[RMDB]
RNA sequence: GGGAACGACUCGAGUAGAGUCGAAAAACAAAGCAUGGCUAGAAGAUGCCACCGCGGAUAGAGCUGAGGUACUCUAGACUUCUAGCCAGAAGAAUUCCCAAUCCGCGGAGAGUGCUCUCGCAAAAAAUCAUGUAUGCGUGUUCGCACGCAUACAUGAAAAAGAAACAACAACAACAAC
Reactivity to DMS in 0.01 (KOAc 150mM, MgCl2 10mM, bicine 150mM(pH8.5), 24C), signal-to-noise 1, nucleotides 027 to 126: a100c160a160a070a160g000c070a200u000g060g040c000u000a050g010a010a030g020a230u000g000c110c180a150c000c010g020c000g020g000a090u000a110g020a150g000c040u000g000a150g000g060u000a030c000u000c020u000a120g010a050c010u000u000c000u000a020g010c010c000a000g000a000a120g000a100a120u000u000c000c000c000a170a160u000c000c020g010c000g020g000a090g000a050g020u010g030c000u000c010u000c050g060c180a000a040a030a080a030a090
Reactivity to 2A3 in 0.01 (KOAc 150mM, MgCl2 10mM, bicine 150mM(pH8.5), 24C), signal-to-noise 1, nucleotides 027 to 126: a000c090a040a080a020g200c070a070u040g000g010c000u000a000g000a000a020g030a080u160g150c100c030a010c000c010g010c020g000g000a050u070a110g130a010g090c180u150g030a030g050g090u010a020c000u010c020u020a110g080a270c000u000u000c000u000a010g000c000c000a010g000a010a010g000a000a080u020u010c000c030c040a000a040u000c000c020g000c000g000g000a020g000a000g000u040g010c020u030c020u110c230g000c030a070a080a070a070a000a030
Conditions: 150 mM KOAc, 10 mM MgCl2 and 150 mM bicine (pH 8.5), 24 C. An RNA of 177 nucleotides, treated with DMS and 2A3 and read out base by base. High 2A3 reactivity points to a flexible backbone, as in loops and unpaired stretches. 2A3 adducts were read by reverse transcription with SuperScript II with manganese. For 2A3, 1,132 sequencing reads were counted.